[RMDB]
RNA sequence: GGGAACGACUCGAGUAGAGUCGAAAAUGAAGAAGUAUUUGAAGAACUAUCAGAUGAAGAUUUAAUCAAGGCAUUGAAUCAACCCACUUCGGCGCUUCCAACUUUGGUGGGAUCGGCCAGAAAGAAACACAUUAGUGGAGUUCGCUCCACUAAUGUGAAAAGAAACAACAACAACAAC
Reactivity to 2A3 in 0.01 (KOAc 150mM, MgCl2 10mM, bicine 150mM(pH8.5), 24C), signal-to-noise 1, nucleotides 027 to 126: u070g000a030a080g050a020a020g090u080a090u130u160u150g090a100a080g080a110a000c070u100a090u120c020a020g010a040u070g110a100a110g010a020u030u070u010a000a020u070c060a080a030g100g010c090a020u010u030g010a010a020u010c020a060a050c030c000c010a050c020u030u070c080g020g030c010g030c050u060u000c030c060a070a070c050u160u130u230g030g010u030g020g040g040a020u040c030g120g090c020c030a040g030a030a060a000g000a000a100a000
Reactivity to DMS in 0.01 (KOAc 150mM, MgCl2 10mM, bicine 150mM(pH8.5), 24C), signal-to-noise 2, nucleotides 027 to 126: u010g010a130a090g030a090a060g010u000a090u020u000u010g010a120a110g020a100a120c080u020a090u000c010a070g000a090u000g000a070a120g000a040u000u010u000a030a020u000c060a140a130g010g020c130a010u010u000g010a050a020u010c050a070a150c010c010c010a100c090u000u000c060g020g010c040g000c220u030u000c010c010a060a070c060u000u000u010g030g010u000g000g000g010a030u000c030g020g020c010c030a120g000a020a040a070g010a110a070a090